Chemical mapping of a 207-nucleotide RNA with 2A3. The data come from the RNA Mapping Database (RMDB), library M2RFOK. Conditions: 150 mM KOAc, 10 mM MgCl2 and 150 mM bicine (pH 8.5), 24 C.
[RMDB]
RNA sequence: GGGAACGACUCGAGUAGAGUCGAAAAACAUGCUGGCCAACCCAAGCCCACGAUCCUCCAUCGGCAUGAUCAUGAUGUGUUCUCAAAUAUCAGGCCAGUAAAUCACCAUGCUCGUGCUGGUAAAGGCAACUUAUGCCCAAGUUCGCUUGGGCAUAAAGUAUCCAGUCUGGUUCGCCAGACUGGAUACAAAAGAAACAACAACAACAAC
Reactivity to 2A3 in 0.01 (KOAc 150mM, MgCl2 10mM, bicine 150mM(pH8.5), 24C), signal-to-noise 2, nucleotides 027 to 156: a000c070a000u070g000c000u030g010g000c000c000a080a040c050c020c020a100a030g010c080c020c040a100c080g100a100u110c010c020u100c070c020a050u050c010g010g000c010a000u020g010a000u010c000a000u010g040a050u060g030u000g030u070u000c010u000c030a100a100a020u230a090u160c080a090g030g010c030c000a000g020u020a000a040a060u130c030a010c030c000a010u000g000c040u000c010g030u020g000c030u010g020g010u100a160a170a000g040g000c000a070a000c040u010u000a000u000g000c000c000c010a020a000g010u020u060c140g030c140u010u000g040g030g010c000a000u010a000a000a000